[RMDB]
RNA sequence: GGGAACGACUCGAGUAGAGUCGAAAAAAAGAUAUGGAGAGGUCGAAAGGUGGAACUACGUUCGGGCAGCCUCGGAAACGAGGCUGUCUCUAGCGUGACGCCACUGUAAGACCUCUCCUAAGUCAAAGGUUCAUUACUUCUUCGGAAGUAAUGAACCAAAAGAAACAACAACAACAAC
Reactivity to DMS in 0.01 (KOAc 150mM, MgCl2 10mM, bicine 150mM(pH8.5), 24C), signal-to-noise 1, nucleotides 027 to 126: a100a130a040g000a030u000a300u000g030g000a010g010a010g030g020u000c010g010a150a100a190g000g000u000g000g000a000a090c130u000a020c010g030u000u000c190g070g000g000c000a000g010c010c000u010c000g000g000a020a080a180c000g010a010g000g000c000u000g000u000c020u010c020u000a020g040c010g120u000g000a090c300g000c000c000a000c000u000g000u000a190a300g020a000c000c000u000c000u000c000c020u000a000a020g000u000c110a090a100a120